[RMDB]
RNA sequence: GGGAACGACUCGAGUAGAGUCGAAAAGCGGGACCCAACCGCACGACGUCGAGUCCGCGGUGUCGCUCGGUUCGCCGGAAUGUCGCCGCCGCGUCCGGCGCGGUCAUGAUCGUGAUGACGUCCAACCCCUAUUCCAGGCGUUCGCGCCUGGAAUAGGAAAAGAAACAACAACAACAAC
Reactivity to 2A3 in 0.01 (KOAc 150mM, MgCl2 10mM, bicine 150mM(pH8.5), 24C), signal-to-noise 4, nucleotides 027 to 126: g000c010g010g010g100a150c000c020c010a020a020c000c010g010c010a010c030g090a060c000g020u040c010g030a100g110u010c030c060g000c000g000g010u000g000u010c010g000c000u010c000g010g020u060u080c100g030c050c010g030g120a220a140u190g120u190c040g010c050c010g010c010c010g000c010g010u000c000c010g020g000c030g000c020g020g010u050c030a060u110g070a100u080c050g090u090g090a080u080g010a070c010g040u040c010c020a050a050c020c020
Reactivity to DMS in 0.01 (KOAc 150mM, MgCl2 10mM, bicine 150mM(pH8.5), 24C), signal-to-noise 1, nucleotides 027 to 126: g010c060g000g000g000a080c070c010c060a130a180c020c010g000c030a120c150g000a080c000g050u020c080g010a070g000u000c010c120g000c050g000g000u000g000u010c020g020c040u000c100g000g000u000u020c190g000c010c000g000g030a050a010u030g040u020c020g000c010c020g040c010c060g050c030g000u000c030c010g000g000c000g000c020g000g000u010c070a020u030g030a130u050c090g000u020g000a070u010g000a060c030g050u060c020c050a060a060c110c130
Structure probing data (2A3 and DMS) for a 177-nucleotide construct. It was measured as part of the RMDB library OK1LIB. DMS adducts were read by reverse transcription with MarathonRT.